An RNA of 177 nucleotides, treated with DMS and 2A3 and read out base by base. The reactions ran in a buffer of 150 mM KOAc, 10 mM MgCl2 and 150 mM bicine (pH 8.5), at 24 C. For DMS the reverse transcriptase was MarathonRT.

RNA sequence: GGGAACGACUCGAGUAGAGUCGAAAAAGUGGUUACUGCUGGUGCUGCUUGCUGCCUGGCGCGCCGCAUGGCCUUGCUAGAGCCGCUUUGUGCAUGCUGGUGGAUACUUGGCCGUGUAGUCCACGGCGUUUUUGCCCUUUUUCGAAAGGGCAAAAACAAAAGAAACAACAACAACAAC
Reactivity to DMS in 0.01 (KOAc 150mM, MgCl2 10mM, bicine 150mM(pH8.5), 24C), signal-to-noise 3, nucleotides 027 to 126: a030g010u010g010g010u000u000a100c040u000g020c040u010g030g010u000g000c060u010g010c060u010u000g020c040u000g010c040c020u000g000g000c130g010c300g020c010c070g000c130a050u010g000g000c020c050u010u000g020c070u000a070g000a140g020c020c050g000c030u000u000u010g020u000g030c070a050u000g010c010u010g020g010u000g010g010a180u000a030c090u010u000g010g020c000c020g020u000g010u010a160g000u000c180c010a030c030g000g010c030
Reactivity to 2A3 in 0.01 (KOAc 150mM, MgCl2 10mM, bicine 150mM(pH8.5), 24C), signal-to-noise 1, nucleotides 027 to 126: a000g050u050g010g040u130u110a140c030u010g030c050u100g030g000u080g030c020u030g020c010u060u030g010c020u040g010c000c010u040g070g020c030g040c030g000c030c000g000c060a030u100g010g020c000c000u040u110g000c000u030a020g000a050g040c000c000g030c050u070u100u100g090u060g040c040a040u070g020c040u010g040g020u020g010g030a040u060a080c040u030u090g050g000c000c030g020u010g000u020a080g080u010c030c000a010c010g000g000c050